Structure probing data (2A3) for a 207-nucleotide construct. The reactions ran in a buffer of 150 mM KOAc, 10 mM MgCl2 and 150 mM bicine (pH 8.5), at 24 C. The 2A3 profile rests on 1,061 reads. Values cover nucleotides 27 to 156. The data come from the RNA Mapping Database (RMDB), library RNAMAK.
RNA sequence: GGGAACGACUCGAGUAGAGUCGAAAAGGGGUCUUCACGAUGGUAGUACAAGACAUGCUCUUAGGGAGCUGAAGCCUCCACGGCUCCCAGGAGAGCAACAGCUUGUACGAGAGUAGUGAAGACGGAGGCACCCAAAAGAACCUGUUCGCAGGUUCAACUUUUCUUAAAGCUUCGGCUUUAAGAAAAGAAAAGAAACAACAACAACAAC
Reactivity to 2A3 in 0.01 (KOAc 150mM, MgCl2 10mM, bicine 150mM(pH8.5), 24C), signal-to-noise 1, nucleotides 027 to 156: g210g000g030g010u000c000u000u000c000a000c020g050a050u040g020g000u010a020g010u010a020c000a050a000g080a050c140a290u300g000c000u020c000u010u040a030g000g010g000a000g000c020u010g000a050a030g000c030c000u000c000c000a000c000g000g000c000u010c030c030c030a010g200g020a000g000a000g040c000a020a030c020a020g010c000u000u010g000u030a020c020g000a010g000a000g000u010a020g000u010g000a010a000g000a000c010g000g000a020g000g000c020a010c000c000c000a020a200a000a030g000a000a000c000c000u050g040u110u130c250g010c150a000g000g000u000u000c000a000a010